[RMDB]
RNA sequence: GGGAACGACUCGAGUAGAGUCGAAAAGUUUAUGCAAAGGCACUUCGCAAUGUGUGCUCAAACAUUGCUUAUUCAAACACGCUUCACGAUGUGCGACAAAGAAACAUUGUUAUAAGAGCUAAUGUUUACCACGCCUAAAGGUUCGCCUUUAGGCGAACCAUGCCUUAAGCUUCGGCUUAAGGCAUGGAAAAGAAACAACAACAACAAC
Reactivity to 2A3 in 0.01 (KOAc 150mM, MgCl2 10mM, bicine 150mM(pH8.5), 24C), signal-to-noise 6, nucleotides 027 to 156: g030u080u140u120a140u170g060c070a030a090a100g100g000c020a010c040u090u060c080g020c050a030a020u050g010u000g030u030g040c060u080c170a040a040a010c000a010u010u010g010c000u070u070a160u120u150c080a040a090a040c060a010c080g020c010u070u080c040a020c030g030a020u010g000u010g030c020g040a060c120a070a140a010g090a000a080a000c010a020u010u040g040u090u090a150u050a210a090g040a000g040c020u050a080a050u060g010u030u010u040a110c070c050a050c040g000c010c000u010a000a010a000g020g040u030u060c180g110c040c000u000u000u000a000g010g000c000g000a000a000
Reactivity to DMS in 0.01 (KOAc 150mM, MgCl2 10mM, bicine 150mM(pH8.5), 24C), signal-to-noise 2, nucleotides 027 to 156: g030u010u010u000a110u010g010c040a020a220a150g020g000c030a040c040u010u000c110g040c080a080a080u000g050u000g000u010g030c010u000c100a170a200a040c020a020u000u010g010c060u010u010a090u010u020c060a170a150a050c030a050c060g000c030u000u000c080a100c040g030a100u000g020u020g020c030g000a160c080a080a070a070g000a130a080a020c010a050u000u000g010u000u000a090u020a080a070g010a070g010c010u000a040a120u000g010u000u000u000a130c010c040a170c040g000c000c010u000a000a030a020g000g000u000u000c300g010c020c010u010u000u010a040g020g020c000g000a010a060
Structure probing data (2A3 and DMS) for a 207-nucleotide construct. Source: RMDB library M2RFPK, as collected in RNAgym. For DMS, 3,373 sequencing reads were counted. The reactions ran in a buffer of 150 mM KOAc, 10 mM MgCl2 and 150 mM bicine (pH 8.5), at 24 C. For 2A3, 4,323 sequencing reads were counted.